Conditions: 150 mM KOAc, 10 mM MgCl2 and 150 mM bicine (pH 8.5), 24 C. This 177-nucleotide RNA was probed chemically with 2A3 and DMS. For DMS, 918 sequencing reads were counted.

RNA sequence: GGGAACGACUCGAGUAGAGUCGAAAAGUACAUUUAGAGUGAGAACGAUUGUAUGAAUAGGGUAUACCCAAAAUAUACACGAAAGCAUCGUUGUAAAUACAUGAUUUUAGGUGUAUGAUUAGGGUGUCACGGUAAAUCUGUUCGCAGAUUUACCGUGAAAAGAAACAACAACAACAAC
Reactivity to 2A3 in 0.01 (KOAc 150mM, MgCl2 10mM, bicine 150mM(pH8.5), 24C), signal-to-noise 2, nucleotides 027 to 126: g000u010a000c020a030u100u140u130a130g070a050g070u150g070a120g030a080a020c040g050a080u060u080g060u040a070u050g050a160a120u110a090g130g070g000u030a030u040a060c020c000c040a010a010a010a010u070a000u000a000c010a000c040g040a090a000a000g030c000a000u050c090g000u000u040g090u080a010a180a010u190a040c010a000u030g090a090u010u000u080u050a090g000g090u000g020u010a000u000g080a060u020u040a040g040g000g000u020g010u050
Reactivity to DMS in 0.01 (KOAc 150mM, MgCl2 10mM, bicine 150mM(pH8.5), 24C), signal-to-noise 1, nucleotides 027 to 126: g010u000a000c020a030u000u000u010a080g060a140g000u000g000a120g020a150a060c100g020a070u020u010g010u000a060u010g020a060a080u010a100g020g000g020u010a010u010a030c010c020c040a010a040a080a100u010a010u000a000c000a000c000g030a100a020a030g000c020a000u000c130g040u000u000g000u020a100a120a110u000a020c020a000u010g010a060u000u000u000u000a100g040g010u000g000u000a000u000g000a040u010u000a150g010g000g010u000g000u000